Description:
Structure probing data (DMS and 2A3) for a 207-nucleotide construct. For DMS the reverse transcriptase was MarathonRT. 2A3 adducts were read by reverse transcription with SuperScript II with manganese. For DMS, 3,128 sequencing reads were counted.

[RMDB]
RNA sequence: GGGAACGACUCGAGUAGAGUCGAAAAAAACUGUUAAGUGGUUUGGUAACGCUCGGUAAGGUAGCCAAAAGGCUGAAACUCCGUGCACAAAGACCGCACGGACGCUUCACAUAUAGCUCAUAAACAAGGGUUUGCGAGCUAGCUUGUGGAGUGUGAACCAAUAAUUUGACUUCGGUCAAAUUAUUGGAAAAGAAACAACAACAACAAC
Reactivity to DMS in 0.01 (KOAc 150mM, MgCl2 10mM, bicine 150mM(pH8.5), 24C), signal-to-noise 1, nucleotides 027 to 156: a060a040a120c050u000g000u020u000a090a090g070u000g020g010u020u000u020g020g000u010a080a110c080g000c070u000c040g010g010u000a090a100g010g010u000a080g030c020c010a020a110a050a190g000g000c010u050g010a050a060a040c030u010c000c000g060u000g000c020a260c020a070a070a060g000a110c020c050g000c000a030c000g000g000a060c030g040c000u030u000c000a010c000a070u010a040u000a020g020c020u000c000a020u000a030a010a000c010a120a190g020g030g030u000u000u000g040c030g010a030g000c020u010a020g010c100u000u000g080u010g000g010a020g000u000g000u000g010a130a150
Reactivity to 2A3 in 0.01 (KOAc 150mM, MgCl2 10mM, bicine 150mM(pH8.5), 24C), signal-to-noise 2, nucleotides 027 to 156: a000a000a000c120u120g010u100u040a160a020g040u030g000g070u070u030u050g060g020u090a110a030c030g000c090u030c010g050g020u050a080a070g050g070u020a010g020c020c000a050a230a110a080g020g000c020u030g010a040a030a030c030u000c000c030g000u000g000c010a020c040a070a130a010g060a010c020c030g000c010a010c020g060g000a010c010g000c000u000u000c000a000c030a000u060a010u000a030g000c010u010c000a030u080a080a020a000c070a130a170g300g030g010u020u010u020g000c010g000a000g000c000u000a040g100c060u010u020g000u000g000g010a020g010u010g010u010g010a010a020